[RMDB]
RNA sequence: GGGAACGACUCGAGUAGAGUCGAAAACGUCAAAGGUAAUAUUGCAAUAUCUUUGCCUAAAUAACUACAAUUAAUCAUAUAUUGUGUAAACUUAGGCUCGCCAUAUACAUGCCGCAAUAAAUCAAACUUUUCCACAACACAUAACAUCUCAAAUGCGGAUGUUUAGGAGUUUCGACUCCUAAACAUCAAAAGAAACAACAACAACAAC
Reactivity to DMS in 0.01 (KOAc 150mM, MgCl2 10mM, bicine 150mM(pH8.5), 24C), signal-to-noise 1, nucleotides 027 to 156: c080g020u010c040a090a090a030g010g000u010a070a230u000a100u040u010g000c030a130a160u020a110u020c050u000u000u000g000c010c000u000a000a020a050u010a090a180c070u000a050c010a050a060u000u000a300a180u000c030a120u000a110u000a050u000u000g000u000g030u000a050a100a040c110u000u000a050g020g030c040u000c040g020c020c020a050u000a020u010a040c050a070u010g020c010c070g000c060a070a040u030a030a150a110u000c040a030a090a030c020u000u000u000u000c020c070a130c090a050a060c040a040c010a040u010a020a070c050a040u000c010u010c020a050a050a090u010g000c060g020
Reactivity to 2A3 in 0.01 (KOAc 150mM, MgCl2 10mM, bicine 150mM(pH8.5), 24C), signal-to-noise 8, nucleotides 027 to 156: c060g040u040c030a050a030a020g030g020u040a070a060u030a130u130u100g010c030a040a070u030a080u150c060u090u110u110g000c010c010u050a070a060a070u110a080a040c090u130a020c040a020a030u060u180a090a060u240c030a040u170a070u060a020u180u020g020u000g020u050a090a050a050c050u020u010a010g010g000c030u030c050g020c030c030a020u060a000u040a130c060a050u110g060c020c030g010c030a020a040u070a130a060a060u130c080a030a080a120c040u070u070u060u030c010c030a080c020a130a050c050a030c010a080u130a150a040c020a130u100c060u030c100a060a110a050u170g050c070g040